[RMDB]
RNA sequence: GGGAACGACUCGAGUAGAGUCGAAAACUCCCAUCCAACUACUAUUCCAACACGUCCUCGUCGUACAGAGUGGUAACAUGUGUCACCACAUAUCCAAGCUUGGGUACACGGGCUUGACCCAACCCCUAAAACAGAGACGAGUUCGCUCGUCUCUGAACAGUUACAAUUAGUUCGCUAAUUGUAACUGAAAAGAAACAACAACAACAAC
Reactivity to DMS in 0.01 (KOAc 150mM, MgCl2 10mM, bicine 150mM(pH8.5), 24C), signal-to-noise 4, nucleotides 027 to 156: c100u000c000c000c010a180u010c110c050a070a080c040u000a070c040u000a100u010u000c020c030a060a110c060a080c040g010u000c020c010u000c050g020u000c050g020u020a090c090a090g010a130g050u000g030g020u000a050a050c020a140u010g020u010g010u000c040a040c030c000a030c030a100u000a050u000c030c030a070a150g000c080u010u000g000g020g030u000a060c080a100c070g020g000g000c020u000u000g010a300c020c010c000a060a110c030c010c000c030u000a040a060a080a200c020a030g000a020g000a020c000g000a040g020u010u010c300g020c000u000c010g020u000c010u000c010u000g010a030a110
Reactivity to 2A3 in 0.01 (KOAc 150mM, MgCl2 10mM, bicine 150mM(pH8.5), 24C), signal-to-noise 9, nucleotides 027 to 156: c040u040c010c000c000a030u070c040c030a090a070c030u170a030c020u080a130u130u080c040c030a070a030c030a040c090g060u040c010c030u060c050g070u030c020g020u080a060c050a060g090a030g080u030g020g020u060a070a040c030a130u160g100u080g060u150c040a030c050c010a020c020a050u090a050u080c040c030a050a030g050c100u100u070g010g000g040u030a020c040a010c030g010g010g010c020u090u170g110a190c000c010c000a020a060c010c010c000c000u070a070a060a030a040c010a000g000a000g000a010c000g000a000g000u010u030c100g040c040u000c000g000u000c000u000c000u000g000a010a010

Structure probing data (DMS and 2A3) for a 207-nucleotide construct. The reactions ran in a buffer of 150 mM KOAc, 10 mM MgCl2 and 150 mM bicine (pH 8.5), at 24 C. For DMS, 10,970 sequencing reads were counted. Source: RMDB library M2RFPK, as collected in RNAgym.